Annotation:
Chemical mapping of a 177-nucleotide RNA with DMS. The RNA was probed in 150 mM KOAc, 10 mM MgCl2 and 150 mM bicine (pH 8.5) at 24 C. Source: RMDB library TTRDEL, as collected in RNAgym.
[RMDB]
RNA sequence: GGGAACGACUCGAGUAGAGUCGAAAAGAUAUGGAUCAUGGGAGCUCCGUGGUCGGAAACGACCACCGAGCGAGGAUCAUGUAUCCUAAGUCAAACCCACCUCAACGCUUCGGCGUUGAGGUGGGAACAGCGUACGUAUGUUCGCAUACGUACGCUGAAAAGAAACAACAACAACAAC
Reactivity to DMS in 0.01 (KOAc 150mM, MgCl2 10mM, bicine 150mM(pH8.5), 24C), signal-to-noise 1, nucleotides 027 to 126: g000a060u000a300u010g000g000a000u010c000a020u000g010g010g010a090g010c000u000c000c220g040u000g030g000u010c010g000g000a080a090a160c000g010a010c000c000a010c000c250g030a000g010c000g010a020g040g010a030u020c020a000u020g000u030a010u000c000c000u020a030a140g010u010c030a080a150a120c020c000c000a000c000c000u000c000a000a000c000g010c000u000u030c260g040g030c010g000u000u000g010a010g000g010u000g030g010g000a010a030